Record summary:
The record gives the reactivity of an RNA of 207 nucleotides to 2A3. The RNA was probed in 150 mM KOAc, 10 mM MgCl2 and 150 mM bicine (pH 8.5) at 24 C. Source: RMDB library M2RFOK, as collected in RNAgym.
RNA sequence: GGGAACGACUCGAGUAGAGUCGAAAACAUCUUUCCUCCCUACACAGUGACUCCAGCUUGGGAGGGGCAGGGCUAGGCUGAGCCAGUACUCCCUGUGGUGUCUGCCUGCCACGUGCAGCUCUGGAGUAAAACCUGGAGAAGUUCGCUUCUCCAGGAAGGUAGACUCAUUGUUCGCAAUGAGUCUACCAAAAGAAACAACAACAACAAC
Reactivity to 2A3 in 0.01 (KOAc 150mM, MgCl2 10mM, bicine 150mM(pH8.5), 24C), signal-to-noise 1, nucleotides 027 to 156: c060a070u050c140u040u070u000c010c000u010c000c010c000u240a100c180a040c110a070g080u030g130a020c000u000c000c000a000g030c050u070u080g000g010g000a000g000g000g010g000c000a000g000g000g030c010u300a000g000g000c040u040g060a020g030c010c040a010g010u040a090c040u090c030c030c000u030g110u050g050g000u040g110u000c000u050g090c000c010u000g080c000c030a190c060g170u160g010c040a080g030c030u080c040u120g000g010a000g010u000a000a100a000a000c000c000u000g000g000a000g000a000a010g000u040u120c160g020c060u000u000c000u000c000c000a000g010g000a000a000